[RMDB]
RNA sequence: GGGAACGACUCGAGUAGAGUCGAAAAUGCACUUUUAUACAGGUGCCUACAGAUGCAAAUCCGACGUGAUUUCAAUCACGGCCCGGUCAGGGCUUUGGGAUUGCUGAGUGAUCCAUUCGUGGAUCACGUUAAUAUUGCUGUUCGCAGCAAUAUUAACAAAAGAAACAACAACAACAAC
Reactivity to 2A3 in 0.01 (KOAc 150mM, MgCl2 10mM, bicine 150mM(pH8.5), 24C), signal-to-noise 8, nucleotides 027 to 126: u090g000c010a020c010u050u060u100u130a300u110a180c140a060g010g010u010g010c000c010u110a100c060a070g130a100u110g000c010a060a030a220u000c000c000g010a010c020g010u010g010a020u050u300u250c140a150a050u010c000a020c010g010g010c000c000c000g090g170u200c100a100g000g000g000c000u150u190u110g020g000g000a000u000u010g000c000u040g070a060g040u010g000a000u010c010c000a030u050u090c230g070u040g000g010a000u000c000a000c010
Reactivity to DMS in 0.01 (KOAc 150mM, MgCl2 10mM, bicine 150mM(pH8.5), 24C), signal-to-noise 9, nucleotides 027 to 126: u010g010c000a010c000u010u000u010u020a170u010a140c240a040g010g010u000g000c010c190u000a100c180a100g010a120u010g010c010a020a050a070u000c000c000g000a140c010g010u000g000a020u000u010u010c260a110a080u000c000a000c000g020g000c000c000c000g010g010u010c300a120g000g000g000c000u000u010u010g010g000g000a020u000u000g000c010u010g010a200g020u000g000a000u000c000c000a050u000u010c150g020u000g000g010a010u000c000a000c010

The record gives the reactivity of an RNA of 177 nucleotides to 2A3 and DMS. For DMS the reverse transcriptase was MarathonRT. Reactivities are given for positions 27 through 126. The reactions ran in a buffer of 150 mM KOAc, 10 mM MgCl2 and 150 mM bicine (pH 8.5), at 24 C. 2A3 adducts were read by reverse transcription with SuperScript II with manganese.